[RMDB]
RNA sequence: GGGAACGACUCGAGUAGAGUCGAAAACCGCUACUCUUCGGAGUAGCGGAUACAUCUCGGGUCCGGGCCUUACCGUAGGACCAACGGUAAGGGCAGAGAUGAAGGGAGAGAUUUUCGAAUCUCUCAAAAUUAACUUUGACUUCGGUCAAAGUUAAUUAAAAGAAACAACAACAACAAC
Reactivity to DMS in 0.01 (KOAc 150mM, MgCl2 10mM, bicine 150mM(pH8.5), 24C), signal-to-noise 2, nucleotides 027 to 126: c000c000g010c010u000a000c000u000c010u000u010c180g020g020a020g000u000a000g020c000g010g000a030u000a070c020a010u000c000u000c010g010g000g010u010c040c030g000g010g020c010c000u000u010a010c000c000g000u010a050g000g010a120c160c130a040a020c010g000g000u000a000a010g000g000g010c030a060g010a010g010a040u000g000a220a110g000g000g000a010g000a010g010a020u000u000u000u010c180g010a010a030u000c010u000c000u010c010a010a040
Reactivity to 2A3 in 0.01 (KOAc 150mM, MgCl2 10mM, bicine 150mM(pH8.5), 24C), signal-to-noise 1, nucleotides 027 to 126: c000c000g000c010u010a000c000u000c020u030u050c260g180g000a010g000u010a000g000c000g010g000a000u010a020c000a010u000c010u010c000g050g000g140u020c050c050g020g090g040c040c000u000u000a000c000c010g020u030a060g100g270a100c030c000a010a000c000g000g000u010a010a000g020g020g020c040a040g000a000g000a010u040g020a070a050g160g070g020a000g000a000g000a000u020u000u040u080c120g050a060a010u000c000u010c000u000c000a000a040
Source: RMDB library M2PK50, as collected in RNAgym. An RNA of 177 nucleotides, treated with DMS and 2A3 and read out base by base. For 2A3, 1,771 sequencing reads were counted. The reactions ran in a buffer of 150 mM KOAc, 10 mM MgCl2 and 150 mM bicine (pH 8.5), at 24 C. For DMS, 2,824 sequencing reads were counted. Values cover nucleotides 27 to 126. 2A3 adducts were read by reverse transcription with SuperScript II with manganese.